RNA sequence: GGGAACGACUCGAGUAGAGUCGAAAAUCCGUCAAGCAACCGCCCCGCUGAGCUGGGAGAAAGCAUUCUCUGCGAUGGCUCGAUCCUUUUGGGACCGGAUCCUCAGCCCCCAGCCCCCCGGGACUCACUGAUUGGGAAUUUUCGAAUUCCCAAUCAGAAAAGAAACAACAACAACAAC
Reactivity to DMS in 0.01 (KOAc 150mM, MgCl2 10mM, bicine 150mM(pH8.5), 24C), signal-to-noise 3, nucleotides 027 to 126: u030c020c000g000u070c040a050a060g010c110a060a080c080c060g000c070c030c010c080g050c080u010g000a060g020c110u040g000g030g000a080g010a080a110a140g000c050a090u020u010c060u030c090u010g000c090g000a070u010g000g000c030u010c100g000a110u020c040c010u000u020u010u000g000g000g030a080c090c020g000g020a090u010c020c020u020c020a100g030c000c010c010c010c030a070g010c000c030c020c080c070c020g020g000g010a140c030u020c120a240
Reactivity to 2A3 in 0.01 (KOAc 150mM, MgCl2 10mM, bicine 150mM(pH8.5), 24C), signal-to-noise 4, nucleotides 027 to 126: u010c010c000g050u070c090a070a070g030c020a050a030c030c030g040c010c000c000c010g040c030u050g020a030g010c010u020g020g030g020a090g110a080a050a000g040c030a090u140u060c080u050c060u120g030c050g100a100u170g020g010c010u010c020g010a040u010c010c000u100u180u180u250g060g020g030a040c010c050g050g000a020u010c000c010u060c030a010g000c010c010c000c000c000a000g010c010c000c000c000c000c000g030g020g020a030c010u030c040a040

Overview
Structure probing data (DMS and 2A3) for a 177-nucleotide construct. For 2A3 the reverse transcriptase was SuperScript II with manganese. Source: RMDB library RFM100, as collected in RNAgym. Values are in units of 0.01, from 0 to 300, in steps of 10. The reactions ran in a buffer of 150 mM KOAc, 10 mM MgCl2 and 150 mM bicine (pH 8.5), at 24 C.